[RMDB]
An RNA of 177 nucleotides, treated with DMS and read out base by base. The RNA was probed in 150 mM KOAc, 10 mM MgCl2 and 150 mM bicine (pH 8.5) at 24 C.

RNA sequence: GGGAACGACUCGAGUAGAGUCGAAAAGACGUUUUCCAAAAUAAGGCGAACGUGUGUUGGGCCAAGGCUUUGGUGCCGGUACUGAAGACUGCAGGCAUAGACAUGACCACUGAACAAUGGAACACUGUACCCUCCAACAGUUCGCUGUUGGAGGGUAAAAAGAAACAACAACAACAAC
Reactivity to DMS in 0.01 (KOAc 150mM, MgCl2 10mM, bicine 150mM(pH8.5), 24C), signal-to-noise 1, nucleotides 027 to 126: g020a130c100g040u050u000u010u000c010c030a140a110a150a110u010a130a120g000g020c000g000a020a030c040g000u000g020u000g000u010u010g000g000g000c060c020a070a100g000g000c020u020u000u000g000g010u000g000c050c060g000g020u000a050c080u010g020a060a040g000a030c050u000g000c070a090g010g010c070a070u010a140g000a030c060a020u010g000a130c060c010a030c000u010g040a050a040c150a040a050u000g020g000a130a060c050a080c060u000g000